[RMDB]
About this RNA:
An RNA of 177 nucleotides, treated with DMS and read out base by base. DMS adducts were read by reverse transcription with MarathonRT. For DMS, 904 sequencing reads were counted. The reactions ran in a buffer of 150 mM KOAc, 10 mM MgCl2 and 150 mM bicine (pH 8.5), at 24 C.

RNA sequence: GGGAACGACUCGAGUAGAGUCGAAAAUUCCAAUCCCAACUUUUGUCCAGUUGGGCGGCGGAAGAACGUUCUCUUUGAGGGCAUUGAAACGGUAUGGAUGCGGGAUAGCAAAGCAGCUUGAAGAAACCUGAAAAUAUGUCUUCGGACAUAUUUUCAGAAAAGAAACAACAACAACAAC
Reactivity to DMS in 0.01 (KOAc 150mM, MgCl2 10mM, bicine 150mM(pH8.5), 24C), signal-to-noise 2, nucleotides 027 to 126: u000u000c030c010a180a300u000c010c010c000a040a020c020u000u000u040u020g030u010c210c230a060g010u000u000g020g000g000c200g020g000c270g010g000a040a010g010a070a140c090g000u000u000c030u010c020u000u020u000g000a090g010g000g000c020a020u020u010g000a100a070a070c110g000g020u000a060u000g000g000a080u010g030c040g020g000g050a110u000a070g000c050a050a100a060g000c030a020g020c070u000u010g000a120a110g020a050a100a160c170